Chemical mapping of a 170-nucleotide RNA with 2A3 and DMS. High 2A3 reactivity points to a flexible backbone, as in loops and unpaired stretches. For DMS, 5,202 sequencing reads were counted. Conditions: 150 mM KOAc, 10 mM MgCl2 and 150 mM bicine (pH 8.5), 24 C. The data come from the RNA Mapping Database (RMDB), library 15KLIB.

[RMDB]
RNA sequence: GGGAACGACUCGAGUAGAGUCGAAAAGCAAGAUAGAGGAGCCCCCGUGACGCUGGCAGCAUCGCGGACUGGGAGAAGAGAGGCGAAGAAAAGAAGGGGAGUCCCCGAUCGAAUGUCCAUAGGCAGAACAGCUGACGCUUCGGCGUCAGCAAAAGAAACAACAACAACAAC
Reactivity to 2A3 in 0.01 (KOAc 150mM, MgCl2 10mM, bicine 150mM(pH8.5), 24C), signal-to-noise 2, nucleotides 027 to 129: g050c060a000a040g010a090u200a040g020a000g000g000a000g000c000c000c000c000c000g080u090g030a030c000g040c050u020g090g080c020a010g000c010a030u060c000g010c060g080g010a010c020u060g010g000g000a030g000a050a000g030a000g000a000g060g000c070g030a000a010g010a000a040a000a000g020a010a040g040g020g000g030a010g010u050c010c010c000c000g020a030u060c010g030a020a060u070g030u000c010c000a050u000a020g000g010c010a030g020a100a090c000a000
Reactivity to DMS in 0.01 (KOAc 150mM, MgCl2 10mM, bicine 150mM(pH8.5), 24C), signal-to-noise 3, nucleotides 027 to 129: g070c150a020a100g000a120u010a070g000a030g010g010a060g020c000c130c030c050c210g070u000g020a050c080g050c040u000g040g050c160a060g000c070a070u000c020g010c020g050g010a080c050u000g010g000g010a000g020a050a150g010a100g040a020g010g000c110g040a080a030g010a050a140a130a100g000a040a080g010g010g010g080a030g010u030c060c040c000c080g060a070u000c050g030a050a030u040g070u080c000c000a060u040a040g010g070c070a020g020a110a110c200a060